[RMDB]
RNA sequence: GGGAACGACUCGAGUAGAGUCGAAAAAUCAGCCUUCGUUCUGUAAACGGGGUUGGAUCCGACUCUCAUAGGCUCUCCAACCCAACUCCUACUCAAUACGUCCUCGUCGUACAGAACGGUAACAUGUAACCUAUGGAAGUUUCGACUUCCAUAGGUUAAAAGAAACAACAACAACAAC
Reactivity to DMS in 0.01 (KOAc 150mM, MgCl2 10mM, bicine 150mM(pH8.5), 24C), signal-to-noise 3, nucleotides 027 to 126: a070u030c130a120g020c050c070u000u030c000g020u000u000c020u010g000u010a090a100a020c050g010g000g010g010u000u010g000g000a010u010c030c010g000a130c090u020c130u030c150a110u010a130g010g000c030u000c040u000c000c010a020a030c010c010c000a080a060c100u000c090c040u000a070c060u000c050a120a080u020a120c100g000u010c010c010u000c000g000u010c080g020u000a020c010a020g000a010a010c000g000g000u010a030a070c220a070u000g020u000
Reactivity to 2A3 in 0.01 (KOAc 150mM, MgCl2 10mM, bicine 150mM(pH8.5), 24C), signal-to-noise 6, nucleotides 027 to 126: a000u100c060a040g090c010c020u120u090c020g000u000u010c010u050g040u050a030a040a040c030g010g000g000g000u000u010g010g000a040u230c000c000g080a070c010u050c030u030c100a130u090a160g020g000c010u020c000u000c010c000a030a020c010c010c000a000a010c020u030c000c020u050a110c020u020c050a060a170u100a170c030g100u070c010c020u040c020g060u030c030g000u020a010c000a030g020a010a000c010g000g010u070a050a020c040a030u090g050u110
The data come from the RNA Mapping Database (RMDB), libraries RFM100 and RFMREP. The record gives the reactivity of an RNA of 177 nucleotides to DMS and 2A3. The reactions ran in a buffer of 150 mM KOAc, 10 mM MgCl2 and 150 mM bicine (pH 8.5), at 24 C. 2A3 adducts were read by reverse transcription with SuperScript II with manganese. DMS adducts were read by reverse transcription with MarathonRT.